[RMDB]
RNA sequence: GGGAACGACUCGAGUAGAGUCGAAAAGAUAUGGAAUACUCUCGAUAAGCUGCUAUUCGGAAACGAAUAUCAGCUUUUGACGAGAGUUCCUAAGUCAAACUAGUUGUCGGUUCGCCGACAACUAGAACAGUUUAAUGGCGUUCGCGCCAUUAAACUGAAAAGAAACAACAACAACAAC
Reactivity to DMS in 0.01 (KOAc 150mM, MgCl2 10mM, bicine 150mM(pH8.5), 24C), signal-to-noise 1, nucleotides 027 to 126: g000a040u000a300u010g010g010a050a080u000a060c030u000c010u000c000g010a200u010a010a020g010c000u010g000c140u000a010u000u000c010g030g010a030a080a120c000g000a000a000u000a030u000c010a010g040c000u000u000u010u000g000a190c150g000a010g000a040g000u000u000c000c000u010a070a190g030u000c030a100a100a140c000u000a030g000u010u000g000u000c000g010g000u000u010c230g010c000c010g010a000c000a000a010c000u000a000g000a100a110